[RMDB]
RNA sequence: GGGAACGACUCGAGUAGAGUCGAAAAGCGUACUACGAUGGAAACGCCCAUAUGGUCAACAGCUGAGCUCCCAAAUAGGAGCUCAGACAUGACCAUGAUGGAAGCUAAGCAUCGUAUCGCAAAGAUCGUUUCUGAAGUUCGCUUCAGAAACGAUCAAGUUUGUUGCAGGAUUCGUCCUGCAACAAACAAAAGAAACAACAACAACAAC
Reactivity to DMS in 0.01 (KOAc 150mM, MgCl2 10mM, bicine 150mM(pH8.5), 24C), signal-to-noise 1, nucleotides 027 to 156: g020c010g070u000a010c160u010a010c000g030a020u030g010g000a210a160a100c060g000c030c000c010a020u000a060u000g000g030u000c000a010a090c110a160g020c000u000g020a030g010c000u020c000c000c010a020a140a170u030a070g000g010a050g020c000u010c000a010g020a010c080a300u010g000a030c000c000a000u000g020a010u000g030g000a050a060g010c000u010a170a130g010c010a000u050c000g010u010a040u000c020g000c020a110a080a100g010a030u000c000g020u000u000u000c000u030g010a040a030g040u000u000c270g030c010u010u000c000a030g000a030a000a010c030g000a020u010c000a030a100
Reactivity to 2A3 in 0.01 (KOAc 150mM, MgCl2 10mM, bicine 150mM(pH8.5), 24C), signal-to-noise 4, nucleotides 027 to 156: g030c020g000u050a110c030u000a000c010g010a000u020g010g110a230a050a050c090g000c000c000c000a000u000a000u000g000g000u010c020a040a030c010a220g040c000u000g010a000g000c000u040c040c040c020a190a220a020u270a100g010g000a000g000c000u000c000a000g000a010c010a020u050g000a000c000c000a000u010g120a000u000g000g020a080a040g000c020u050a080a000g080c010a000u000c020g000u010a030u300c010g000c020a010a030a000g000a000u000c000g000u000u000u010c000u010g000a000a000g000u060u140c230g060c200u010u000c000a010g000a000a000a000c000g000a000u000c000a000a010